RNA sequence: GGGAACGACUCGAGUAGAGUCGAAAAUGAUGACCUUGUUCCAGAGGCCACCAGGCAGUGGGACCGGGCCUGAGUGGGUGGGGCUGGGGCCUGUGUGGACCUUACCCAGGGUCUGAAGAGCCCUCUCCGCCUUCUCAGAUCUCUUGCCUCUGUCCGCGAAUAAUUGGUGUUUCGACACCAAUUAUUCAAAAGAAACAACAACAACAAC
Reactivity to 2A3 in 0.01 (KOAc 150mM, MgCl2 10mM, bicine 150mM(pH8.5), 24C), signal-to-noise 2, nucleotides 027 to 156: u200g050a060u070g050a060c000c000u030u040g040u060u060c040c040a040g020a000g110g000c030c040a050c020c040a030g020g000c030a100g060u200g030g000g020a080c060c060g020g000g010c000c030u070g000a000g010u010g010g010g030u080g020g000g010g080c160u180g000g040g020g010c020c020u090g040u060g030u120g090g040a080c000c000u050u070a160c010c010c030a030g000g000g010u000c020u020g050a060a030g080a010g040c000c000c000u020c010u000c010c010g000c010c000u000u040c020u000c010a040g000a100u020c040u000c000u000u100g010c000c000u000c010u010g000u060c070c060g050c110